[RMDB]
RNA sequence: GGGAACGACUCGAGUAGAGUCGAAAAUAUUUUUAAUGGAGACCGGGUUUCAUCAUGUUGGCCAGGCUGGUCUUGAACUUGAACUUCUGACCUCAAGUGAUCCACCCUUAGCGUCCCAAAGUGCUGGAGAUUAUCGGUAGUUCGCUACCGAUAAUCUAAAAGAAACAACAACAACAAC
Reactivity to DMS in 0.01 (KOAc 150mM, MgCl2 10mM, bicine 150mM(pH8.5), 24C), signal-to-noise 1, nucleotides 027 to 126: u020a020u010u010u020u000u020a100a070u000g000g010a050g000a060c050c090g000g030g000u000u020u000c000a040u000c070a100u010g010u000u010g010g020c020c040a070g010g010c110u000g000g030u000c030u020u000g010a060a060c090u000u010g000a040a090c110u000u000c050u000g010a070c090c050u000c070a050a070g020u000g000a050u020c040c070a070c070c040c010u010u010a070g000c100g000u000c020c010c000a070a080a090g010u000g000c100u000g010g010